Background:
The record gives the reactivity of an RNA of 177 nucleotides to DMS. Conditions: 150 mM KOAc, 10 mM MgCl2 and 150 mM bicine (pH 8.5), 24 C. The DMS profile rests on 683 reads.

[RMDB]
RNA sequence: GGGAACGACUCGAGUAGAGUCGAAAAGCCCAGCAGGGCAGCAGCUGCGAGCAGCAGGCCGAGCAGCAGCCCCACCAGGAAGAGGCCCACGCUGCGCACUAGCAUGGCCACCAGCCCGCAGAGCAGCGUACGACGCACUGUUCGCAGUGCGUCGUACAAAAGAAACAACAACAACAAC
Reactivity to DMS in 0.01 (KOAc 150mM, MgCl2 10mM, bicine 150mM(pH8.5), 24C), signal-to-noise 1, nucleotides 027 to 126: g000c010c010c000a120g020c190a080g010g000g050c110a050g000c070a110g010c000u000g010c000g040a050g020c020a050g000c280a130g020g010c060c020g000a130g020c020a100g020c010a080g010c030c010c000c000a130c080c160a160g010g000a190a070g010a090g000g020c030c020c140a020c110g010c010u040g000c010g040c100a070c120u000a130g070c020a120u000g020g030c030c050a050c120c070a140g000c030c000c140g000c010a000g000a080g000c020a010g010c060

The data come from the RNA Mapping Database (RMDB), library OK2TRN.